[RMDB]
RNA sequence: GGGAACGACUCGAGUAGAGUCGAAAACUCCCUGUAUGCCACUCGCGUAGCUGCCAAACUCAGUUGAAACAACUGCCUUCUCCCGGCGAGAUUCAGGCAUUGUGUUCGUACGUUUGGCUCUACUGCGCCUGAAUUUUAACUUCGGUUAAAAUUCAGGAAAAGAAACAACAACAACAAC
Reactivity to 2A3 in 0.01 (KOAc 150mM, MgCl2 10mM, bicine 150mM(pH8.5), 24C), signal-to-noise 2, nucleotides 027 to 126: c000u040c000c000c030u040g130u060a150u150g070c050c040a110c090u080c040g010c000g020u020a010g030c140u040g010c020c040a000a030a020c020u080c080a080g010u110u140g120a030a040a000c020a010a000c130u060g020c000c010u010u010c010u070c000c010c010g290g000c160g030a000g010a010u190u200c060a000g000g040c010a000u000u000g020u000g040u030u010c030g050u090a050c000g030u020u000u010g000g000c010u000c000u020a020c010u050g000c060g020
Reactivity to DMS in 0.01 (KOAc 150mM, MgCl2 10mM, bicine 150mM(pH8.5), 24C), signal-to-noise 2, nucleotides 027 to 126: c230u000c010c010c000u010g000u010a050u000g000c070c100a100c150u010c070g020c030g020u000a000g000c170u000g000c010c010a030a000a000c050u020c190a160g000u000u000g000a020a080a010c000a020a010c270u010g000c010c000u000u010c020u000c010c030c170g030g000c170g000a060g000a070u020u010c280a000g010g010c030a010u000u000g000u010g000u000u000c020g000u000a050c100g030u000u000u000g000g000c010u000c000u010a040c010u020g040c030g000
Source: RMDB library RFMREP, as collected in RNAgym. Structure probing data (2A3 and DMS) for a 177-nucleotide construct. The DMS profile rests on 1,691 reads.